[RMDB]
RNA sequence: GGGAACGACUCGAGUAGAGUCGAAAAGAAAGAAAGAAAUUAGCUCGCCAGUUAGCGAGGUCUGUCCCCACACGACAGAUAAUCGGGUGCAACUCCCGCCCCUUUUCCGAGGGUCAUCGGAGCCAAAAAAACUCAGGCAACUUCGGUUGCCUGAGAACCUGAUGACAAAGUUCGCUUUGUCAUCAGGAAAAGAAACAACAACAACAAC
Reactivity to 2A3 in 0.01 (KOAc 150mM, MgCl2 10mM, bicine 150mM(pH8.5), 24C), signal-to-noise 2, nucleotides 027 to 156: g070a010a060a000g080a030a110a020g040a030a140a020u120u090a110g020c000u010c010g000c030c040a190g150u180u130a000g020c010g000a000g000g010u010c010u000g000u000c010c030c030c000a020c010a010c080g020a000c010a010g000a000u040a070a070u080c000g010g000g000u000g000c000a000a000c020u010c020c000c000g030c000c000c000c000u020u190u120u010c000c000g010a010g010g000g020u070c020a000u000c000g020g000a010g000c000c010a010a080a070a040a040a060a070c000u000c000a000g000g000c000a000a010c020u040u060c120g040g000u000u000g010c000c000u010g000a010g000a000a000